[RMDB]
The record gives the reactivity of an RNA of 177 nucleotides to DMS.
Values cover nucleotides 27 to 126.
The RNA was probed in 150 mM KOAc, 10 mM MgCl2 and 150 mM bicine (pH 8.5) at 24 C.
Values are in units of 0.01, from 0 to 300, in steps of 10.
Source: RMDB library OK2TRN, as collected in RNAgym.
RNA sequence: GGGAACGACUCGAGUAGAGUCGAAAAUAUGUAUAAGGUCUAUUGUCUUUGUAGACAUGUUAUGUAUGGAUGUAGUAAGCCUGGUUGCUUGUUUUGUUAUAAGAGAAACCGUAGUGUCCGUGUUAAGUCCUCCUCGUGUAUUCGUACACGAGGAGGAAAAAGAAACAACAACAACAAC
Reactivity to DMS in 0.01 (KOAc 150mM, MgCl2 10mM, bicine 150mM(pH8.5), 24C), signal-to-noise 1, nucleotides 027 to 126: u000a030u000g010u000a030u000a190a100g020g000u000c000u000a030u000u010g020u010c110u020u010u010g020u010a010g020a020c000a030u010g010u010u010a020u010g000u000a030u000g010g000a300u000g000u010a090g000u000a080a120g010c010c010u000g010g010u010u010g000c100u040u010g030u010u000u000u010g000u010u000a170u000a070a060g000a120g010a060a050a030c010c030g020u010a090g020u000g010u000c070c020g000u000g020u010u020a080a120g000